Description: This 207-nucleotide RNA was probed chemically with DMS and 2A3. Values cover nucleotides 27 to 156. For DMS the reverse transcriptase was MarathonRT. The 2A3 profile rests on 4,708 reads.
RNA sequence: GGGAACGACUCGAGUAGAGUCGAAAAUUCUACUUCGGUAGAACAAGGGGUCAUCCGAAAGGAGGGUAAGACAUGCUCUGAAGCCUCCACGGAGCAACAGCUUACCUCCCCACCCUUUCGUGAUGACGGAGGCACCCGCGACCAUUGUUCGCAAUGGAUAAACCUAGUUAUUCGUAACUAGGUUUAUAAAAGAAACAACAACAACAAC
Reactivity to DMS in 0.01 (KOAc 150mM, MgCl2 10mM, bicine 150mM(pH8.5), 24C), signal-to-noise 4, nucleotides 027 to 156: u000u000c000u000a020c010u000u010c250g070g030u000a000g000a040a040c040a100a160g020g050g020g020u000c010a060u000c010c000g010a040a030a040g000g000a280g020g000g010u000a030a060g010a100c030a300u000g010c020u000c000u000g000a040a150g030c010c000u000c030c020a300c040g030g000a040g000c000a090a070c070a150g000c010u000u000a030c000c000u050c300c040c050c060a300c080c000c000u000u010u000c040g050u010g020a010u000g000a040c040g010g020a000g030g030c000a060c010c020c010g000c010g010a110c000c020a300u000u000g000u000u000c070g020c060a040a040u000g000g010
Reactivity to 2A3 in 0.01 (KOAc 150mM, MgCl2 10mM, bicine 150mM(pH8.5), 24C), signal-to-noise 4, nucleotides 027 to 156: u020u000c000u000a010c010u030u070c260g110g000u020a010g010a040a030c060a130a120g110g000g000g010u000c000a010u020c000c000g000a010a000a000g010g010a020g000g010g000u010a000a000g010a030c130a290u300g000c000u000c000u010g020a050a020g010c000c000u000c000c000a000c000g000g010a010g000c050a070a100c030a150g050c000u000u000a000c000c000u060c060c030c010c000a020c010c000c030u000u000u000c070g050u150g010a000u010g020a020c050g000g000a000g000g030c000a010c010c000c010g070c050g080a050c000c010a000u020u010g030u100u120c190g030c120a010a020u020g030g000